[RMDB]
RNA sequence: GGGAACGACUCGAGUAGAGUCGAAAAAGUGGUGACUUUCCCUCGUCACUCCUAUGGAGUUCUACCUGGAGCCCAGCCAUGUGUGGAACUGUGAAGUUUACUCCUCUGUAAAGAUGGUUUAAAGAAAGUCAGCUUCUGAAAUGUAACAAUGCUAACCCUUACACUUAAGCUUCGGCUUAAGUGUAAGAAAAGAAACAACAACAACAAC
Reactivity to 2A3 in 0.01 (KOAc 150mM, MgCl2 10mM, bicine 150mM(pH8.5), 24C), signal-to-noise 2, nucleotides 027 to 156: a000g150u080g010g010u010g010a010c010u070u060u070c010c010c000u030c010g010u030c000a010c000u050c010c020u210a240u280g140g020a040g020u000u030c060u060a050c000c020u000g030g000a060g040c000c020c010a010g000c000c000a070u120g140u060g010u000g020g000a010a010c000u020g040u020g040a050a030g020u000u030u090a030c020u020c020c000u040c040u090g070u170a040a090a080g050a050u120g010g100u010u130u170a060a080a040g040a060a070a010g040u010c010a000g010c010u000u000c010u030g060a050a050a070u080g060u130a070a040c070a130a080u100g030c030u060a050a080c010c030
Reactivity to DMS in 0.01 (KOAc 150mM, MgCl2 10mM, bicine 150mM(pH8.5), 24C), signal-to-noise 2, nucleotides 027 to 156: a110g020u000g030g020u000g010a080c050u000u010u010c040c030c030u000c090g000u000c100a090c020u000c050c050u000a120u020g060g000a040g010u000u010c020u000a030c020c020u000g000g020a110g000c030c010c030a180g030c010c000a040u000g000u000g020u000g020g000a100a030c030u000g010u020g040a140a140g010u000u000u000a100c040u000c060c010u000c030u000g020u000a060a110a080g010a060u010g030g010u000u000u000a090a070a110g000a050a040a100g020u000c020a080g000c040u000u000c030u000g010a070a080a080u000g020u000a090a090c070a030a110u010g020c000u000a090a200c180c070